[RMDB]
RNA sequence: GGGAACGACUCGAGUAGAGUCGAAAAAGCCGAGGACUACGGUCCUCGGCAACAACCGUCACAACGGCUUCCUGGCGUGACGGGGUUAACCCCAACGGAGCAAGUGCGAGCUUACGAGCUCGCACCAUUUAGGAGAAUUCCUUCGGGAAUUCUCCAACAUAUUUGAUCUGUUCGCAGAUCAAAUAUGAAAAGAAACAACAACAACAAC
Reactivity to 2A3 in 0.01 (KOAc 150mM, MgCl2 10mM, bicine 150mM(pH8.5), 24C), signal-to-noise 2, nucleotides 027 to 156: a000g020c010c010g020a010g020g000a000c030u060a000c260g100g000u000c000c000u010c010g010g130c000a000a000c030a000a000c000c000g000u000c010a020c000a040a040c070g050g010c010u210u200c020c050u080g060g000c000g000u000g000a010c000g010g000g000g010u050u210a060a080c020c000c000c000a060a050c130g050g000a020g030c040a130a000g040u000g000c010g010a020g000c010u100u100a070c210g070a020g010c010u000c000g000c000a000c000c000a010u070u120u220a050g000g000a000g000a000a000u000u010c020c000u050u150c180g100g000g000a000a000u000u000c000u000c000c000a000a000